Background
The record gives the reactivity of an RNA of 177 nucleotides to DMS and 2A3. Reactivities are given for positions 27 through 126.
[RMDB]
RNA sequence: GGGAACGACUCGAGUAGAGUCGAAAAGGCAAUUACUUCGGUAAUUGCCAUAUAAACUUGAGAAAUGAAGGGCGCAACUCAAGAAAAUUGCGAAAUAAACAAACAACGAGAGCUUCGGCUCUCGUAACCAAAUUUAAUAGUUCGCUAUUAAAUUUGGAAAAGAAACAACAACAACAAC
Reactivity to DMS in 0.01 (KOAc 150mM, MgCl2 10mM, bicine 150mM(pH8.5), 24C), signal-to-noise 2, nucleotides 027 to 126: g000g010c000a000a000u000u000a000c000u000u000c140g060g010u010a010a000u000u000g000c000c000a010u020a020u010a070a160a110c070u000u000g000a090g020a110a060a090u000g010a080a060g010g000g010c060g010c040a040a160c040u000c050a020a050g000a130a090a090a070u000u000g000c060g000a020a080a070u020a090a060a050c180a080a080a130c230a080a010c010g000a000g000a010g010c020u000u030c230g020g000c000u000c000u000c000g000u010a040a040
Reactivity to 2A3 in 0.01 (KOAc 150mM, MgCl2 10mM, bicine 150mM(pH8.5), 24C), signal-to-noise 2, nucleotides 027 to 126: g010g000c000a000a000u010u000a010c020u050u100c170g000g000u000a000a000u000u010g000c000c000a010u000a000u000a000a000a000c000u030u050g030a020g070a060a240a110u130g060a100a060g060g030g000c050g000c030a030a040c010u010c020a040a020g090a090a110a050a040u120u180g050c090g080a080a030a050u160a070a080a040c100a080a070a000c020a040a000c010g000a000g000a000g000c010u050u040c200g070g000c000u000c000u010c000g000u000a000a000